[RMDB]
RNA sequence: GGGAACGACUCGAGUAGAGUCGAAAAGAUAUGGAAUGUGUACUUUUGACGUGAUCGCAUCGGAAACGAUGCGAAAUAUUUCACGAUAAGUACUCAUUCCUAAGUCAAAGCAACGUUCGCGUUGCAACAUACUUCUCGACUUCGGUCGAGAAGUAUGAAAAGAAACAACAACAACAAC
Reactivity to DMS in 0.01 (KOAc 150mM, MgCl2 10mM, bicine 150mM(pH8.5), 24C), signal-to-noise 2, nucleotides 027 to 126: g000a010u000a110u000g010g000a060a000u000g000u010g000u000a000c000u000u000u010u020g020a200c080g040u000g010a100u000c010g010c000a000u010c010g000g000a030a040a050c000g000a000u010g010c000g000a000a040a090u010a160u000u020u000c000a010c010g010a070u000a020a020g010u000a010c000u000c000a010u000u010c000c010u000a010a110g000u000c000a170a100a210g030c000a010a000c010g030u000u020c210g050c040g010u000u000g010c010a130a220
Reactivity to 2A3 in 0.01 (KOAc 150mM, MgCl2 10mM, bicine 150mM(pH8.5), 24C), signal-to-noise 3, nucleotides 027 to 126: g030a010u040a030u050g000g000a000a000u010g020u030g030u040a000c010u070u160u220u300g300a300c110g000u010g000a020u010c000g020c000a000u000c010g020g000a010a000a010c020g010a010u000g000c010g000a010a000a000u070a020u030u230u030c010a000c000g180a140u080a200a020g010u010a010c000u010c000a000u000u000c000c000u000a020a000g000u000c040a130a030a160g000c000a000a010c010g080u120u140c300g000c020g100u010u000g000c010a000a000
Structure probing data (DMS and 2A3) for a 177-nucleotide construct. The RNA was probed in 150 mM KOAc, 10 mM MgCl2 and 150 mM bicine (pH 8.5) at 24 C. For DMS, 2,825 sequencing reads were counted.